[RMDB]
RNA sequence: GGGAACGACUCGAGUAGAGUCGAAAAUGGCCUAGUUGCCCAGAAGCCUCCCCUCAAAAUCGUUUCAGUCCAAAAUUGAUUCGGCGGCCCUGUCAUGAGGCCGAAACGAAGGCACGUACCCCUUCGAAGUAGAAUCGCUUUUCGAAGCGAUUCUACUAAAAGAAACAACAACAACAAC
Reactivity to DMS in 0.01 (KOAc 150mM, MgCl2 10mM, bicine 150mM(pH8.5), 24C), signal-to-noise 1, nucleotides 027 to 126: u000g000g060c000c070u000a040g030u020u020g010c060c000c020a000g000a070a120g030c070c010u000c000c010c020c010u030c100a060a040a100a110u010c000g000u000u000u000c030a040g000u000c030c050a010a030a080a160u000u010g020a100u010u000c160g000g030c040g000g040c000c030c000u000g020u000c220a140u110g030a060g020g000c030c030g000a000a030a020c000g000a040a030g000g000c020a020c020g020u060a040c010c000c010c020u010u010c110g000a180
Reactivity to 2A3 in 0.01 (KOAc 150mM, MgCl2 10mM, bicine 150mM(pH8.5), 24C), signal-to-noise 2, nucleotides 027 to 126: u070g030g010c000c000u040a050g030u100u140g030c000c000c040a030g020a080a010g020c010c000u030c000c000c000c000u090c020a100a100a040a090u030c030g000u020u040u040c070a070g020u020c040c030a010a000a090a130u110u120g040a100u090u000c000g050g010c000g000g010c040c010c000u170g090u120c030a090u090g040a090g040g030c000c000g040a010a000a000c010g000a000a050g010g000c010a020c120g050u050a020c020c000c000c030u020u020c060g000a040
Source: RMDB library RFM100, as collected in RNAgym. This 177-nucleotide RNA was probed chemically with DMS and 2A3.